[RMDB]
RNA sequence: GGGAACGACUCGAGUAGAGUCGAAAAUUCAAAGGGGAGAGGGGGGGACUUGGAGCACAGGGGUCCAGUUCAGUCCGUGGGAUUACCCCGGAUCUCCCGUUCUCCACACUCCUUCCCCCCCCGGGCUAUGCCUGGUCGUUCGCGACCAGGAAAAGAAACAACAACAACAAC
Reactivity to DMS in 0.01 (KOAc 150mM, MgCl2 10mM, bicine 150mM(pH8.5), 24C), signal-to-noise 2, nucleotides 027 to 129: u030u070c090a000a000a000g060g090g020g040a090g020a080g000g000g000g000g000g000g000a040c050u010u030g010g020a020g040c160a000c030a080g020g010g050g060u000c080c060a070g020u090u070c110a090g000u010c040c070g040u000g050g030g010a300u000u000a130c040c060c020c020g020g010a060u040c040u000c010c010c070g010u000u010c000u050c060c000a100c210a050c120u030c000c000u000u090c010c000c000c040c000c010c010c030g010g010g060c070u070a030u000g040
Reactivity to 2A3 in 0.01 (KOAc 150mM, MgCl2 10mM, bicine 150mM(pH8.5), 24C), signal-to-noise 4, nucleotides 027 to 129: u120u080c060a050a000a040g000g000g020g050a160g000a180g020g000g000g000g000g000g000a010c000u000u070g000g000a000g000c070a010c000a070g020g020g000g010u020c060c040a010g020u130u140c030a030g030u000c010c010g110u280g020g000g020a130u040u300a300c010c010c000c000g000g000a030u000c060u040c010c000c000g020u000u000c000u000c010c000a020c030a000c040u000c000c000u050u060c000c000c000c000c000c000c000c000g000g010g010c070u100a080u190g040